RNA sequence: GGGAACGACUCGAGUAGAGUCGAAAAAUUAGCUAAAUUUAGAGAGACAGUACAGUAAGAGAAUGCACUUUUCCAGAGCUUCCUUUGCAAGAGAGGAUCCAUCUCUUCAAACAAUCUACCACCAGGCUCAUUCCUAGGUGGGCCUAAGAUCCAGAAAGUAAAUGAUACUGUUCGCAGUAUCAUUUACAAAAGAAACAACAACAACAAC
Reactivity to DMS in 0.01 (KOAc 150mM, MgCl2 10mM, bicine 150mM(pH8.5), 24C), signal-to-noise 1, nucleotides 027 to 156: a130u000u020a070g040c060u000a020a070a140u010u000u000a110g000a150g000a100g000a020c040a120g010u000a040c020a040g020u030a090a080g020a110g010a070a080u000g040c050a050c030u000u010u000u010c000c030a080g020a110g000c020u000u000c010c010u000u000u000g010c060a090a090g010a090g000a080g010g000a090u000c030c030a080u000c010u000c010u010u000c020a050a050a100c070a040a120u000c040u010a050c010c000a080c020c010a030g010g000c090u000c090a020u000u000c040c030u000a050g020g010u000g010g000g000c020c020u000a060a050g020a030u010c010c050a090g000a120a060a170
Reactivity to 2A3 in 0.01 (KOAc 150mM, MgCl2 10mM, bicine 150mM(pH8.5), 24C), signal-to-noise 3, nucleotides 027 to 156: a000u100u050a010g020c010u060a070a090a150u170u190u200a100g010a020g010a000g030a060c050a030g060u090a030c020a020g070u090a130a000g050a010g040a100a030u060g020c040a030c030u020u080u080u010c030c040a010g000a010g060c010u050u040c020c010u050u040u070g040c060a030a020g000a000g000a010g040g020a060u040c050c010a090u000c020u000c000u050u040c010a030a050a060c020a010a060u030c020u070a060c010c020a020c000c020a010g020g000c020u040c070a050u200u100c010c020u010a030g000g050u000g000g000g010c000c000u050a030a030g020a010u010c010c030a000g230a070a020a140